[RMDB]
RNA sequence: GGGAACGACUCGAGUAGAGUCGAAAAAGAAAGAGCAACUUAGGAUUUUAGGCUCCGCGGCGUGUCUCGAACCAUGCCGGGCCAAACCCAUAGGGCUGGCGGUCCCUGUGCGGUCAAAAUUCAAAAACAUCAUUCUUCAGUUCGCUGAAGAAUGAUGAAAAGAAACAACAACAACAAC
Reactivity to 2A3 in 0.01 (KOAc 150mM, MgCl2 10mM, bicine 150mM(pH8.5), 24C), signal-to-noise 2, nucleotides 027 to 126: a000g080a020a080a010g020a010g030c010a020a050c050u040u050a060g020g010a040u050u030u040u070a020g000g000c020u000c060c040g110c010g060g000c000g030u010g010u000c060u050c220g030a040a030c030c010a010u010g020c000c000g000g000g000c000c000a030a020a000c000c000c000a010u020a010g050g010g000c050u030g110g070c050g030g050u100c000c020c000u000g000u000g000c080g020g000u040c000a000a010a010a020u030u050c010a040a030a010a030a040
Reactivity to DMS in 0.01 (KOAc 150mM, MgCl2 10mM, bicine 150mM(pH8.5), 24C), signal-to-noise 3, nucleotides 027 to 126: a060g000a060a050a090g020a030g010c030a020a050c090u010u010a050g020g000a020u000u000u000u000a120g000g020c010u000c020c100g000c010g000g030c000g010u000g010u020c060u010c240g010a130a130c190c020a030u000g030c010c010g010g000g010c010c020a020a180a070c010c010c000a030u000a020g010g000g000c030u000g000g020c090g010g000u000c010c000c000u000g010u000g000c140g030g000u000c140a020a010a010a000u010u000c040a040a030a080a080a120